[RMDB]
RNA sequence: GGGAACGACUCGAGUAGAGUCGAAAAAGACGGAACCCCAUCGACUGUCACCAGAUGCUGCAUCACCUGAUCACUGAUGGCUCAACGGUAUCCGGCGGUACAACUGAAUACUUGUAGCUGCCUUUUGAAAAGGAGUUCAUCUUCGGAUGAACUCCAACAAAUAGCAAGGCUUCGGCCUUGCUAUUUGAAAAGAAACAACAACAACAAC
Reactivity to DMS in 0.01 (KOAc 150mM, MgCl2 10mM, bicine 150mM(pH8.5), 24C), signal-to-noise 1, nucleotides 027 to 156: a090g010a150c060g000g030a070a060c050c000c010c040a160u010c070g010a070c000u000g000u000c040a120c030c030a080g010a050u000g000c050u000g010c060a100u010c090a050c010c000u000g000a130u030c080a120c110u020g000a130u000g030g000c050u000c010a080a030c000g000g000u000a030u000c010c010g030g020c030g000g030u000a030c100a050a130c080u010g010a090a070u000a080c050u010u000g000u000a030g010c010u000g020c030c090u000u000u000u000g020a090a070a110a180g010g010a050g030u010u000c010a030u010c000u000u010c300g060g010a000u000g000a010a000c000u000c000c000a000a000
Reactivity to 2A3 in 0.01 (KOAc 150mM, MgCl2 10mM, bicine 150mM(pH8.5), 24C), signal-to-noise 3, nucleotides 027 to 156: a000g070a010c040g040g010a030a030c000c000c010c040a050u050c010g110a110c050u050g030u100c020a010c070c010a030g010a080u050g030c040u060g030c010a030u020c020a040c040c010u050g050a060u060c020a000c040u030g020a030u040g070g020c020u040c070a030a060c040g030g010u070a080u040c050c030g000g000c010g000g020u020a020c030a040a030c050u120g080a130a070u130a180c030u030u030g020u060a040g120c020u020g010c000c000u110u160u070u150g140a120a100a010a050g000g000a010g010u010u000c000a000u000c000u040u050c140g100g000a000u010g000a000a000c000u000c000c000a000a000

Source: RMDB library M2RFPK, as collected in RNAgym. Chemical mapping of a 207-nucleotide RNA with DMS and 2A3. The reactions ran in a buffer of 150 mM KOAc, 10 mM MgCl2 and 150 mM bicine (pH 8.5), at 24 C. The DMS profile rests on 2,111 reads. For DMS the reverse transcriptase was MarathonRT.